[RMDB]
RNA sequence: GGGAACGACUCGAGUAGAGUCGAAAAAGCCCUGUAUGUAAGAGUUGAAUCGAGGGUGACACUUCAGGCCGAUUGUUAUAGUUGUUUGGUUUGUGGCCUGGUGGCUGUAACAGCGGUGUGUUAUGGCCAAUAUUUAUUUUUUCGAAAAUAAAUAUUGAAAAGAAACAACAACAACAAC
Reactivity to 2A3 in 0.01 (KOAc 150mM, MgCl2 10mM, bicine 150mM(pH8.5), 24C), signal-to-noise 3, nucleotides 027 to 126: a000g040c030c000c000u050g050u030a140u080g090u050a090a020g050a020g060u130u130g100a090a040u060c060g010a040g000g050g010u080g050a020c030a020c050u100u080c020a000g060g000c010c010g070a090u050u130g070u110u130a130u070a140g020u010u060g030u040u050u030g180g000u030u050u130g080u090g040g000c000c010u000g020g000u020g010g000c010u010g000u020a000a000c000a020g050c050g100g000u110g020u010g000u060u040a020u020g010g010c000
Reactivity to DMS in 0.01 (KOAc 150mM, MgCl2 10mM, bicine 150mM(pH8.5), 24C), signal-to-noise 9, nucleotides 027 to 126: a120g000c020c000c000u010g010u020a060u010g010u010a070a060g000a290g010u010u010g010a060a160u010c030g010a110g010g010g010u000g010a090c080a060c080u010u010c040a030g000g000c020c010g010a090u030u020g010u010u020a080u020a120g010u000u000g000u000u010u010g010g010u010u020u010g020u010g000g000c010c000u000g000g010u020g000g010c000u000g010u000a010a000c010a060g010c090g010g010u020g010u000g000u000u000a000u000g000g010c020
This 177-nucleotide RNA was probed chemically with 2A3 and DMS. Source: RMDB library OK1LIB, as collected in RNAgym. The RNA was probed in 150 mM KOAc, 10 mM MgCl2 and 150 mM bicine (pH 8.5) at 24 C.